[RMDB]
RNA sequence: GGGAACGACUCGAGUAGAGUCGAAAAGUACCGAUGUGCCAUUGGUACAGUUGCCGCUCAUGGUCGCGGCGAUAUAUUUGGCAAAAACUAACUUUUCCAGUUGUACAGGUUUGCAAAUUAGGUAGAAUCAUACGCGUCACUGGAAUCAUCAUGAGCAUCACCCAGUAUUUUUCGAAAUACUGGGUGAAAAAGAAACAACAACAACAAC
Reactivity to DMS in 0.01 (KOAc 150mM, MgCl2 10mM, bicine 150mM(pH8.5), 24C), signal-to-noise 2, nucleotides 027 to 156: g040u000a030c020c020g010a070u010g040u010g000c080c060a100u000u000g020g030u010a020c050a220g030u000u000g000c000c030g000c020u000c030a100u010g040g030u000c100g020c050g000g030c030g000a050u010a050u010a110u000u000u000g010g010c070a060a060a070a100a070c050u010a070a070c070u000u000u000u020c060c030a090g030u000u000g040u000a100c070a170g030g020u000u000u010g040c070a070a060a140u000u000a090g010g000u000a090g020a090a090u000c050a110u010a090c120g000c050g000u000c050a040c050u000g020g000a070a070u000c080a030u000c030a040u010g000a040g020c020a300
Reactivity to 2A3 in 0.01 (KOAc 150mM, MgCl2 10mM, bicine 150mM(pH8.5), 24C), signal-to-noise 4, nucleotides 027 to 156: g010u010a010c000c010g010a020u060g080u130g130c060c000a030u010u040g010g010u030a010c020a030g010u010u020g040c000c020g000c010u040c030a120u100g090g040u110c040g040c030g030g000c020g020a000u050a010u020a020u070u070u050g030g000c000a040a010a030a050a040c050u110a040a060c020u060u050u080u000c020c000a010g000u070u020g020u150a040c030a050g030g050u060u080u040g050c060a060a090a090u180u090a090g090g060u070a020g090a120a010u070c040a030u070a180c040g020c020g130u030c010a000c030u030g030g000a010a010u040c020a020u010c020a040u110g020a000g000c010a020